[RMDB]
RNA sequence: GGGAACGACUCGAGUAGAGUCGAAAAGAUAUGGAGGCAAGCGACGAUCUAUAAGGUUCGGAAACGAACCAUAGGGAGCUUGCUCCUAAGUCAAACGAGUAAUGUUGGUUCGCCAACAUUACUCGAACUUUUUUACAAUCUUCGGAUUGUAAAAAAGAAAAGAAACAACAACAACAAC
Reactivity to 2A3 in 0.01 (KOAc 150mM, MgCl2 10mM, bicine 150mM(pH8.5), 24C), signal-to-noise 3, nucleotides 027 to 126: g000a030u070a050u150g020g000a050g140g290c000a000a010g000c000g300a300c020g010a100u010c020u020a030u030a280a220g020g000u010u010c000g030g030a060a060a050c000g000a000a000c000c010a000u000a010g000g020g000a000g000c010u010u000g010c010u000c000c010u010a120a030g060u030c040a060a040a120c020g010a010g000u000a010a000u000g010u000u030g060g000u060u180c270g040c100c000a000a000c000a000u000u010a000c000u000c000g000a000a000
Reactivity to DMS in 0.01 (KOAc 150mM, MgCl2 10mM, bicine 150mM(pH8.5), 24C), signal-to-noise 4, nucleotides 027 to 126: g010a030u000a300u000g000g020a010g000g020c010a010a010g000c000g010a060c230g010a020u020c000u000a010u000a110a100g010g000u000u010c000g000g000a090a070a210c000g000a000a010c000c000a030u000a000g000g010g000a020g020c000u000u000g010c000u000c000c010u000a030a190g000u000c020a060a110a260c020g010a020g010u000a000a000u000g010u010u000g000g010u010u020c230g010c020c000a000a000c000a000u000u000a000c000u000c000g010a020a050
Structure probing data (2A3 and DMS) for a 177-nucleotide construct. Values cover nucleotides 27 to 126. For 2A3, 6,630 sequencing reads were counted. Conditions: 150 mM KOAc, 10 mM MgCl2 and 150 mM bicine (pH 8.5), 24 C. For 2A3 the reverse transcriptase was SuperScript II with manganese. For DMS, 4,164 sequencing reads were counted.